An RNA of 177 nucleotides, treated with DMS and read out base by base.

RNA sequence: GGGAACGACUCGAGUAGAGUCGAAAAUUUUAAAAGAGUUGUUUGCCCAGGCUGAUUUCGAGGUCCUGGCCUCAAGCAAUCCUCCUACCUCGACCUCCCAAAGUACUGGGAUUACAGAUGUGAGCCAAAACCGGUAUCUUUUCGAAGAUACCGGUUUAAAAGAAACAACAACAACAAC
Reactivity to DMS in 0.01 (KOAc 150mM, MgCl2 10mM, bicine 150mM(pH8.5), 24C), signal-to-noise 1, nucleotides 027 to 126: u000u000u000u020a060a080a080a240g030a170g020u000u000g000u000u000u000g070c130c010c030a050g000g000c050u010g000a110u000u010u020c150g000a120g020g020u020c020c100u010g010g020c130c040u000c060a100a050g010c040a050a040u010c030c020u010c000c020u010a070c030c040u000c030g010a070c140c090u000c010c020c020a000a110a020g010u000a050c080u000g000g000g010a040u000u000a090c040a110g010a070u000g000u000g000a070g020c020c050a100
Conditions: 150 mM KOAc, 10 mM MgCl2 and 150 mM bicine (pH 8.5), 24 C.